[RMDB]
RNA sequence: GGGAACGACUCGAGUAGAGUCGAAAACAGUUAUGUGCGUCCCUCCCGAAGCUGCGCGCUCGGUCGAAGAGGACGACCAUCGCCGAUAGAGGACGACCGGUCUUCGGUCAAGGGAAUAACAGUAAAAUUGUCGGAAUCUAUUCGUAGAUUCCGACAAAAAAGAAACAACAACAACAAC
Reactivity to DMS in 0.01 (KOAc 150mM, MgCl2 10mM, bicine 150mM(pH8.5), 24C), signal-to-noise 2, nucleotides 027 to 126: c050a110g000u000u000a020u000g000u000g030c060g010u000c010c020c010u000c060c010c000g050a060a110g050c020u000g030c130g030c140g010c000u030c020g060g020u000c050g000a090a150g010a090g000g010a050c030g010a020c060c020a100u000c130g030c090c050g050a110u010a080g020a120g020g010a070c110g020a120c090c060g000g020u010c080u010u000c030g030g010u000c070a100a140g000g000g000a120a040u000a050a000c010a100g010u020a070a070a080a100
Notes:
Source: RMDB library M2PK90, as collected in RNAgym. Chemical mapping of a 177-nucleotide RNA with DMS. The RNA was probed in 150 mM KOAc, 10 mM MgCl2 and 150 mM bicine (pH 8.5) at 24 C. DMS adducts were read by reverse transcription with MarathonRT.